[RMDB]
RNA sequence: GGGAACGACUCGAGUAGAGUCGAAAAGAUAUGGAUCCCGAUCGAUAAGCUGCCAUCGGAAACGAUGGGCAGCUUUUGACGAGAGGGAUCCUAAGUCAAAACGCCUAAUACUUCGGUAUUAGGCGAAGUCUGCAUCAAAGUUCGCUUUGAUGCAGACAAAAGAAACAACAACAACAAC
Reactivity to DMS in 0.01 (KOAc 150mM, MgCl2 10mM, bicine 150mM(pH8.5), 24C), signal-to-noise 2, nucleotides 027 to 126: g040a020u000a300u010g010g010a000u000c000c000c000g000a220u000c000g010a110u000a030a020g010c000u000g010c000c000a050u000c000g010g000a160a070a160c010g020a000u000g000g020g010c000a010g000c000u000u000u000u000g020a260c090g000a020g030a300g050g000g010a010u010c000c000u000a010a090g010u000c000a100a040a130a220c000g010c000c000u000a010a010u000a010c000u010u000c150g020g010u000a000u000u000a010g000g010c000g000a000a030